[RMDB]
RNA sequence: GGGAACGACUCGAGUAGAGUCGAAAAGUAUGUUACGAUUAUGUGACUAGCCAUAAUCGUUGAAGGUACUCGACUUCAACGUAACAUAGAAUUGUCAGUGCGUACUGGCUAGUCACAGUACGGCAGACUACACUCCUAGUCUGCCACUGACUAGGAGCUACUCCCCACUGUUCGCAGUGGGGAGUAGAAAAGAAACAACAACAACAAC
Reactivity to DMS in 0.01 (KOAc 150mM, MgCl2 10mM, bicine 150mM(pH8.5), 24C), signal-to-noise 1, nucleotides 027 to 156: g040u010a070u000g020u000u010a040c060g020a100u000u000a040u000g000u000g000a050c020u000a090g000c090c040a050u020a100a130u000c020g000u000u010g000a030a020g000g020u010a090c220u000c080g030a090c010u000u000c010a070a020c020g000u000a090a030c080a020u010a160g040a090a190u000u010g020u010c040a200g030u000g010c070g050u000a050c240u010g000g010c040u000a050g000u010c020a060c000a030g000u000a060c010g000g000c030a040g030a090c020u000a100c110a130c090u000c020c020u000a010g010u000c000u000g020c070c040a000c050u010g020a040c020u000a040g030g010a070g020
Reactivity to 2A3 in 0.01 (KOAc 150mM, MgCl2 10mM, bicine 150mM(pH8.5), 24C), signal-to-noise 4, nucleotides 027 to 156: g040u030a030u120g020u050u150a040c030g020a170u130u070a070u150g000u000g000a010c000u000a000g000c000c000a050u150a080a100u100c000g010u000u010g000a000a000g030g020u090a050c060u030c100g140a050c000u020u000c000a000a000c000g060u070a050a020c020a070u180a070g210a150a090u100u080g080u150c070a050g190u070g190c050g050u120a060c100u030g000g000c000u000a000g000u000c000a000c010a000g010u010a000c000g020g040c010a010g010a070c010u040a020c060a040c020u010c000c000u000a000g000u000c020u050g200c000c010a020c010u000g000a000c000u000a010g000g010a000g000

This 207-nucleotide RNA was probed chemically with DMS and 2A3. It was measured as part of the RMDB library OK3TST. DMS adducts were read by reverse transcription with MarathonRT. Values cover nucleotides 27 to 156. For 2A3 the reverse transcriptase was SuperScript II with manganese.